[RMDB]
The record gives the reactivity of an RNA of 177 nucleotides to 2A3 and DMS. The reactions ran in a buffer of 150 mM KOAc, 10 mM MgCl2 and 150 mM bicine (pH 8.5), at 24 C. The DMS profile rests on 1,774 reads. The data come from the RNA Mapping Database (RMDB), library M2PK50.

RNA sequence: GGGAACGACUCGAGUAGAGUCGAAAAAGGGCUGGAUUCGUCCAGCCCUGCACAUUCGUACGCAACGAAGCGUAGGUCAUUACGCAAAUGACGUAAAGCGUAGAACCACGGACUUCGGUCCGUGGAAGCGCACAUCGUUAUUCGUAACGAUGUGCGCAAAAGAAACAACAACAACAAC
Reactivity to 2A3 in 0.01 (KOAc 150mM, MgCl2 10mM, bicine 150mM(pH8.5), 24C), signal-to-noise 2, nucleotides 027 to 126: a000g000g000g000c000u000g000g020a030u020u030c110g020u040c030c000a000g010c000c000c000u000g010c000a020c000a130u070u060c020g110u020a020c020g000c010a060a040c060g010a140a010g030c000g010u050a020g000g180u160c040a080u150u000a020c020g040c030a080a050a170u130g090a050c010g030u070a040a100a070g030c000g000u020a040g030a080a040c010c010a010c000g010g000a020c000u040u090c210g080g030u000c000c000g000u010g000g000a010a020
Reactivity to DMS in 0.01 (KOAc 150mM, MgCl2 10mM, bicine 150mM(pH8.5), 24C), signal-to-noise 2, nucleotides 027 to 126: a020g010g010g010c000u000g000g000a040u000u010c140g010u010c000c020a010g000c000c000c000u000g000c080a070c170a210u000u000c050g040u000a030c010g000c060a190a090c090g000a080a120g000c000g000u000a050g020g010u010c120a080u000u000a020c050g000c070a050a050a050u010g000a060c030g020u010a060a080a110g020c020g010u000a030g020a130a240c000c000a000c010g000g000a030c010u010u000c110g050g000u000c000c000g070u020g000g000a010a050
Background: Values cover nucleotides 27 to 126. DMS (dimethyl sulfate) methylates the pairing face of unpaired adenines and cytosines.